[RMDB]
RNA sequence: GGGAACGACUCGAGUAGAGUCGAAAAGCCCCCCUUUUCACUUUGCCAGUUGGACUUAUGUCUUUAUUGGUCAUUCAAGUGGGGCAAAGAAAAUAUCCUUUUAAAACUCAGGCAAACUGGUGUUUGUUCAUUGGUGUAUUUUCGAAUACACCAAUGAAAAAGAAACAACAACAACAAC
Reactivity to 2A3 in 0.01 (KOAc 150mM, MgCl2 10mM, bicine 150mM(pH8.5), 24C), signal-to-noise 9, nucleotides 027 to 126: g000c000c000c000c010c000c000u000u020u060u110c080a100c090u090u070u120g000c000c000a010g010u010u040g010g010a010c000u210u230a110u300g010u000c000u010u210u020a040u010u010g000g010u060c040a030u060u090c050a000a000g010u010g010g010g000g000c010a060a080a010g090a020a100a010a020u110a080u050c010c000u040u080u040u150a070a110a020a020c040u030c040a010g040g000c070a120a060a160c040u030g030g030u050g080u050u020u040g130u030
Reactivity to DMS in 0.01 (KOAc 150mM, MgCl2 10mM, bicine 150mM(pH8.5), 24C), signal-to-noise 3, nucleotides 027 to 126: g000c010c000c000c020c020c000u000u000u020u020c200a140c110u000u000u010g020c000c000a010g000u010u000g000g000a020c020u010u010a140u030g020u000c010u000u010u010a020u000u010g010g000u010c140a050u020u020c210a020a020g020u000g000g000g000g020c010a050a090a130g000a110a050a090a120u030a060u020c000c000u000u010u010u010a030a080a070a040c060u000c040a020g000g000c160a090a060a030c030u000g000g010u020g010u000u000u000g030u010
Notes:
Structure probing data (2A3 and DMS) for a 177-nucleotide construct. Conditions: 150 mM KOAc, 10 mM MgCl2 and 150 mM bicine (pH 8.5), 24 C. 2A3 adducts were read by reverse transcription with SuperScript II with manganese.